[RMDB]
The record gives the reactivity of an RNA of 207 nucleotides to DMS and 2A3. 2A3 adducts were read by reverse transcription with SuperScript II with manganese. For DMS, 5,748 sequencing reads were counted. For DMS the reverse transcriptase was MarathonRT. Conditions: 150 mM KOAc, 10 mM MgCl2 and 150 mM bicine (pH 8.5), 24 C.

RNA sequence: GGGAACGACUCGAGUAGAGUCGAAAAUGACUUUGGUGUGGCUCAUUUGCCUUACAAAACAAGUGAGUAGAGUGUCUUUUGGAGGAAGCAUGGGUAGUCGGGCAUCGACAGUUAAUUCACUCUCCGGAUUCGUGGGUUAACAUAAAGAAAAUGGUACAAACCAUGGUUAUUUCGAUAACCAUGGUUUAAAAGAAACAACAACAACAAC
Reactivity to DMS in 0.01 (KOAc 150mM, MgCl2 10mM, bicine 150mM(pH8.5), 24C), signal-to-noise 3, nucleotides 027 to 156: u000g010a070c030u010u000u000g030g010u000g020u000g030g000c010u020c020a080u010u000u000g020c000c030u030u000a110c140a140a100a080a040c020a020a030g030u010g000a040g040u000a100g000a100g010u000g010u000c020u000u000u010u000g020g000a150g010g000a060a050g020c050a060u010g000g020g030u010a080g020u000c060g020g000g020c080a090u000c050g020a070c040a100g020u000u010a010a040u000u000c010a050c020u010c080u000c130c120g000g010a180u000u000c060g010u000g010g000g020u010u000a010a020c000a130u000a040a090a100g010a050a050a060a080u010g020g010u010a150c070
Reactivity to 2A3 in 0.01 (KOAc 150mM, MgCl2 10mM, bicine 150mM(pH8.5), 24C), signal-to-noise 3, nucleotides 027 to 156: u070g000a000c000u040u040u060g020g010u050g050u110g040g010c000u000c040a100u100u060u090g010c010c000u050u070a070c090a020a070a020a000c030a020a020g030u050g180a000g010u040a020g030a030g010u060g040u040c050u090u150u070u080g030g010a020g010g010a030a020g010c030a050u070g050g000g000u000a010g020u030c020g020g040g070c020a070u060c040g040a040c010a020g000u020u020a010a000u070u010c020a020c000u110c020u080c090c040g110g030a130u150u090c040g030u000g000g020g000u000u000a010a000c020a050u140a050a140a010g110a010a100a030a040u150g060g020u130a060c120